[RMDB]
The data come from the RNA Mapping Database (RMDB), library TTRDES. An RNA of 177 nucleotides, treated with 2A3 and DMS and read out base by base. The reactions ran in a buffer of 150 mM KOAc, 10 mM MgCl2 and 150 mM bicine (pH 8.5), at 24 C. For DMS the reverse transcriptase was MarathonRT. As a SHAPE reagent, 2A3 marks flexible, mostly unpaired nucleotides at the ribose 2'-OH.

RNA sequence: GGGAACGACUCGAGUAGAGUCGAAAAAAAAAGAUAUGGACCAAGCAAGAACUAUACGCGACGAAGCACUUCGGAAACGAAGUGCAGAGCGUAAUAAUGUUUGAUGACCUUGGUCCUAAGUCAAAAAGAUGUGGUAUGAGUUCGCUCAUACCACAUCAAAAGAAACAACAACAACAAC
Reactivity to 2A3 in 0.01 (KOAc 150mM, MgCl2 10mM, bicine 150mM(pH8.5), 24C), signal-to-noise 1, nucleotides 027 to 126: a110a000a050a050a000g050a000u090a050u270g000g020a010c000c000a020a000g050c040a150a300g110a010a020c040u040a010u020a230c060g140c080g210a300c060g060a130a000g000c060a000c000u020u020c000g000g000a040a030a030c040g040a000a000g000u070g000c010a000g000a000g050c020g040u020a030a050u210a070a060u170g010u030u010u020g300a300u090g060a040c050c000u000u020g060g000u040c000c010u000a020a000g010u000c030a010a030a030a030a020
Reactivity to DMS in 0.01 (KOAc 150mM, MgCl2 10mM, bicine 150mM(pH8.5), 24C), signal-to-noise 1, nucleotides 027 to 126: a050a100a030a080a040g010a050u020a300u020g000g000a040c000c000a000a000g040c090a050a140g020a000a040c010u000a070u000a000c000g010c020g000a090c300g000a110a050g020c000a010c000u000u000c000g000g010a090a110a210c000g020a000a000g000u020g010c000a000g000a180g000c000g040u000a010a110u000a110a070u020g020u000u000u000g040a140u000g000a050c300c000u000u000g050g000u000c000c040u000a040a070g000u010c020a160a050a120a110a060